[RMDB]
An RNA of 177 nucleotides, treated with 2A3 and DMS and read out base by base. For 2A3 the reverse transcriptase was SuperScript II with manganese. For DMS the reverse transcriptase was MarathonRT. The 2A3 profile rests on 1,128 reads. Source: RMDB library OK2TRN, as collected in RNAgym. The reactions ran in a buffer of 150 mM KOAc, 10 mM MgCl2 and 150 mM bicine (pH 8.5), at 24 C.
RNA sequence: GGGAACGACUCGAGUAGAGUCGAAAAUCGAUUCGGCACUGGCUCGACGACCGCAUGGGCUAACUGUAGUGGCGAUUGGGGCUACUUCCGGUCGAACGGAAAUGUGUCGGUCGGCAGUGAAGGCGCGACCGAAUGCCGAGUUCGCUCGGCAUUCGGUAAAAGAAACAACAACAACAAC
Reactivity to 2A3 in 0.01 (KOAc 150mM, MgCl2 10mM, bicine 150mM(pH8.5), 24C), signal-to-noise 1, nucleotides 027 to 126: u080c030g050a010u090u110c000g000g000c020a010c040u020g150g010c040u050c040g130a070c010g060a060c020c010g050c120a150u210g100g090g000c110u120a210a070c050u080g050u170a050g000u080g060g060c070g040a100u070u130g050g000g140g000c000u030a000c000u050u040c040c000g060g000u060c090g020a090a030c000g050g040a050a050a060u090g000u030g040u060c020g000g020u000c000g020g090c010a030g030u040g150a030a000g120g030c080g000c020g050
Reactivity to DMS in 0.01 (KOAc 150mM, MgCl2 10mM, bicine 150mM(pH8.5), 24C), signal-to-noise 2, nucleotides 027 to 126: u010c110g000a080u010u000c000g000g000c010a020c020u000g040g000c020u000c030g000a300c020g010a160c040c060g000c150a060u010g010g010g030c100u020a040a080c080u010g000u000a050g030u010g000g020c010g020a190u040u000g000g010g020g020c030u000a040c110u000u010c010c000g000g000u000c050g010a070a130c130g010g000a050a080a090u010g010u020g010u000c000g000g020u000c010g010g010c120a070g000u010g000a080a080g000g010c070g020c090g010